[RMDB]
RNA sequence: GGGAACGACUCGAGUAGAGUCGAAAAGAUAUGGAGAGGGGUGUUGUGGCAGGACAUGACGUAGUAGGGUCGGAAACGACCCGAAACGUCAACAGCCUGCGUAACAUCAACACCCCUCUCCUAAGUCCUGGGUAAUAACGUUCGCGUUAUUACCCAGAAAAGAAACAACAACAACAAC
Reactivity to DMS in 0.01 (KOAc 150mM, MgCl2 10mM, bicine 150mM(pH8.5), 24C), signal-to-noise 1, nucleotides 027 to 126: g000a060u040a100u010g000g000a030g000a040g020g010g000g050u000g020u000u000g000u000g010g020c000a020g030g020a050c050a300u000g070a020c000g000u000a070g010u000a130g010g030g000u000c010g000g000a150a070a180c010g000a020c000c000c000g000a020a250a130c030g000u000c000a000a070c290a190g000c000c000u000g000c000g010u000a050a230c170a080u000c000a000a010c030a010c000c010c000c010u000c000u000c000c000u000a000a070g040u010c020